[RMDB]
RNA sequence: GGGAACGACUCGAGUAGAGUCGAAAAUCAAUACCAGGGAAGGACACACAGCAAACAUUUGCUGGAUCCACGUCACACCCGUGGCGACUUCUCGGCCACGGGCGUAUUUGGACCUUUUUCUCACAUAUCCUCGAUAAAAGUUCGCUUUUAUCGAGGAAAAAGAAACAACAACAACAAC
Reactivity to DMS in 0.01 (KOAc 150mM, MgCl2 10mM, bicine 150mM(pH8.5), 24C), signal-to-noise 5, nucleotides 027 to 126: u030c130a100a090u050a140c060c080a080g000g000g000a040a030g000g020a170c230a120c260a230c000a010g020c030a020a040a200c240a110u030u000u000g010c010u000g000g030a170u010c000c000a040c130g000u000c150a030c010a040c010c000c000g010u000g000g000c010g000a060c250u000u010c060u010c070g020g000c000c000a010c010g000g010g010c030g000u000a020u010u000u000g000g000a130c080c020u020u010u000u020u020c010u000c020a070c190a110u030a130
Reactivity to 2A3 in 0.01 (KOAc 150mM, MgCl2 10mM, bicine 150mM(pH8.5), 24C), signal-to-noise 8, nucleotides 027 to 126: u110c030a040a040u060a100c010c020a040g010g020g040a020a040g010g030a020c010a000c010a000c000a100g000c010a020a060a140c090a280u040u080u060g000c000u010g000g020a020u000c000c000a010c030g040u040c040a010c000a010c030c000c000g000u000g000g010c010g100a150c070u230u100c090u100c090g140g000c010c000a000c000g000g000g000c000g000u010a020u020u030u030g020g010a020c000c000u010u040u020u060u030c060u030c010a110c010a040u230a050